[RMDB]
RNA sequence: GGGAACGACUCGAGUAGAGUCGAAAACAUAGCGUUUCACAAUGUGCGCCAUUAACAUUGUUUAUGCAAGCACGUUUCGCAAGGUACGGCGCAGAAACAUUGCCAACACAAAUACGCUUCACGAUGUAAAACAUCGGUGCGUUCGCGCACCGAUGAACUGCUGUUAAAUCUUCGGAUUUAACAGCAGAAAAGAAACAACAACAACAAC
Reactivity to DMS in 0.01 (KOAc 150mM, MgCl2 10mM, bicine 150mM(pH8.5), 24C), signal-to-noise 1, nucleotides 027 to 156: c030a060u000a030g020c020g010u010u010u000c070a110c020a210a060u000g010u030g040c060g000c080c080a150u000u010a100a060c020a110u000u000g030u010u010u000a040u020g020c020a090a130g040c060a050c110g010u000u000u000c020g020c150a110a080g030g010u000a030c070g010g020c040g000c000a060g010a060a060a060c020a050u000u000g080c040c030a030a040c050a040c080a020a010a130u000a030c070g000c020u000u030c070a060c040g000a050u000g010u010a060a040a170a170c000a000u000c000g040g000u000g020c010g010u000u000c290g040c010g020c000a000c000c000g010a000u000g030a010a060
Reactivity to 2A3 in 0.01 (KOAc 150mM, MgCl2 10mM, bicine 150mM(pH8.5), 24C), signal-to-noise 4, nucleotides 027 to 156: c060a060u120a010g000c000g020u010u070u140c120a050c010a010a040u030g000u020g010c010g000c010c030a090u100u110a040a020c020a070u060u080g060u060u110u120a080u090g080c060a060a130g050c040a040c150g020u030u070u070c050g010c040a040a020g030g000u050a040c040g010g020c040g000c020a010g060a030a110a010c020a020u000u070g000c030c040a150a000c050a050c010a080a130a030u120a020c020g010c010u050u070c080a080c070g090a080u140g030u260a020a060a090a080c000a010u000c000g000g000u000g000c010g000u020u030c220g000c000g000c050a000c000c000g000a000u000g000a000a010
This 207-nucleotide RNA was probed chemically with DMS and 2A3. For DMS the reverse transcriptase was MarathonRT. The data come from the RNA Mapping Database (RMDB), library M2RFPK. For 2A3, 2,258 sequencing reads were counted. 2A3 adducts were read by reverse transcription with SuperScript II with manganese.